[RMDB]
RNA sequence: GGGAACGACUCGAGUAGAGUCGAAAAGAACUUUUUCGAAUGACGCCCUUGAGGCGAAGGGAGGGGAAAUGAAUAUCGAAUUGAUCGACGAGUUUUCACAGAACCCCACGCGAAUAAAGGUGAUCGGUCAGCUAUUCAUGUUCGCAUGAAUAGCUGAAAAAGAAACAACAACAACAAC
Reactivity to DMS in 0.01 (KOAc 150mM, MgCl2 10mM, bicine 150mM(pH8.5), 24C), signal-to-noise 3, nucleotides 027 to 126: g000a080a130c040u000u000u010u000u000c000g010a080a040u000g030a150c070g000c020c000c000u000u000g000a160g000g010c000g010a030a040g010g000g020a160g020g010g010g030a070a080a060u010g000a070a100u000a150u010c010g000a100a230u010u000g000a080u000c090g020a060c040g010a180g000u000u000u000u000c010a090c160a180g010a160a180c030c000c010c030a080c110g000c020g010a060a050u000a020a020a020g000g010u000g000a150u000c040g010g000
Reactivity to 2A3 in 0.01 (KOAc 150mM, MgCl2 10mM, bicine 150mM(pH8.5), 24C), signal-to-noise 3, nucleotides 027 to 126: g050a020a050c020u000u000u030u070u070c040g060a120a080u070g030a040c020g010c010c000c000u050u190g160a210g030g060c020g030a030a000g070g010g030a180g020g020g000g030a010a070a040u060g030a010a010u070a040u120c050g040a030a090u130u150g050a070u120c030g040a030c020g010a010g070u100u040u040u020c040a070c030a070g090a120a090c000c000c010c000a000c020g030c010g060a040a020u170a130a070a010g070g030u050g070a100u070c030g040g050

Overview:
Structure probing data (DMS and 2A3) for a 177-nucleotide construct. The RNA was probed in 150 mM KOAc, 10 mM MgCl2 and 150 mM bicine (pH 8.5) at 24 C. For 2A3, 1,893 sequencing reads were counted. It was measured as part of the RMDB library OK2TST. For DMS, 2,115 sequencing reads were counted.